[RMDB]
RNA sequence: GGGAACGACUCGAGUAGAGUCGAAAAAUACAAGCUCUGCCUUCGAAACACCAUCGAUCGUGCCUUCUUCUUUACCUUCUUCUGGCUCUUCCGAUGAGACGCGACCGGUGGCAUCACCUCUCGGUUCGUCCCAACCUGCUUUUUGUCUAUCUGAGCCCAAACAUAUGAUGUUCGCAUCAUAUGUUUGAAAAGAAACAACAACAACAAC
Reactivity to 2A3 in 0.01 (KOAc 150mM, MgCl2 10mM, bicine 150mM(pH8.5), 24C), signal-to-noise 6, nucleotides 027 to 156: a000u230a020c050a040a030g010c020u050c060u130g040c030c000u060u080c060g050a110a090a040c060a040c030c010a030u030c020g040a040u030c030g040u040g010c020c000u080u100c010u080u030c010u080u210u110a130c030c020u100u090c010u110u050c050u100g030g000c010u010c020u200u040c070c040g060a080u080g040a020g010a040c020g010c030g020a010c010c010g010g000u010g010g000c010a060u080c010a020c010c000u030c010u030c010g010g000u040u020c010g010u010c010c000c000a060a110c020c040u080g070c100u130u090u060u090u100g070u030c040u040a140u040c040u040g010a020g000c000c020
Reactivity to DMS in 0.01 (KOAc 150mM, MgCl2 10mM, bicine 150mM(pH8.5), 24C), signal-to-noise 3, nucleotides 027 to 156: a160u020a110c060a090a110g010c000u000c020u000g010c020c030u000u000c030g020a160a140a120c100a080c050c020a110u000c020g000a060u000c020g010u000g010c010c000u000u000c060u010u010c050u000u000u000a090c070c030u000u010c050u010u000c050u000g030g030c050u000c020u000u010c070c060g010a180u010g010a060g010a040c020g010c040g020a060c000c010g080g020u000g000g000c030a120u000c060a120c040c010u000c020u000c020g030g040u000u000c030g060u000c020c020c000a080a150c120c050u000g020c040u010u000u000u000u000g020u000c000u000a300u000c040u000g010a120g030c080c110

The data come from the RNA Mapping Database (RMDB), library VIROID. Structure probing data (2A3 and DMS) for a 207-nucleotide construct. The 2A3 profile rests on 14,440 reads. For DMS, 8,406 sequencing reads were counted.